[RMDB]
RNA sequence: GGGAACGACUCGAGUAGAGUCGAAAAGAUAUGGAUAUUCUCAGAGCACUUGGAUUUAUCGUCGGAAACGACGAUUGUCAGUGCCUGAGAGAUAUCCUAAGUCAAAGCACCUCGUUCGCGAGGUGCAGAUAGAAGGGUUGUUCGCAACCCUUCUAUCAAAAGAAACAACAACAACAAC
Reactivity to 2A3 in 0.01 (KOAc 150mM, MgCl2 10mM, bicine 150mM(pH8.5), 24C), signal-to-noise 5, nucleotides 027 to 126: g040a020u110a040u250g000g000a000u000a020u030u000c010u020c000a000g060a060g020c010a000c110u250u300g180g020a080u300u300u180a040u080c010g000u000c010g030g050a080a080a070c020g010a000c000g000a000u010u010g010u000c010a000g000u000g000c000c000u000g000a010g010a010g000a000u000a000u010c000c000u010a120a000g060u020c070a160a030a060g000c000a010c010c010u010c010g050u090u140c300g020c000g180a000g040g000u010g000c000a000
Reactivity to DMS in 0.01 (KOAc 150mM, MgCl2 10mM, bicine 150mM(pH8.5), 24C), signal-to-noise 6, nucleotides 027 to 126: g000a050u000a300u010g000g010a010u000a000u000u000c000u000c000a010g010a240g020c010a000c010u000u010g040g010a010u020u020u000a000u000c000g030u000c000g010g010a120a100a240c000g020a010c000g010a000u000u000g000u000c000a030g020u000g010c010c000u000g000a010g010a030g000a010u000a010u000c000c000u000a040a130g000u000c060a100a160a170g010c000a010c000c000u000c000g010u000u010c280g030c010g010a010g000g010u000g000c000a010
The record gives the reactivity of an RNA of 177 nucleotides to 2A3 and DMS. The reactions ran in a buffer of 150 mM KOAc, 10 mM MgCl2 and 150 mM bicine (pH 8.5), at 24 C. The 2A3 profile rests on 12,677 reads. The data come from the RNA Mapping Database (RMDB), library TTRDES.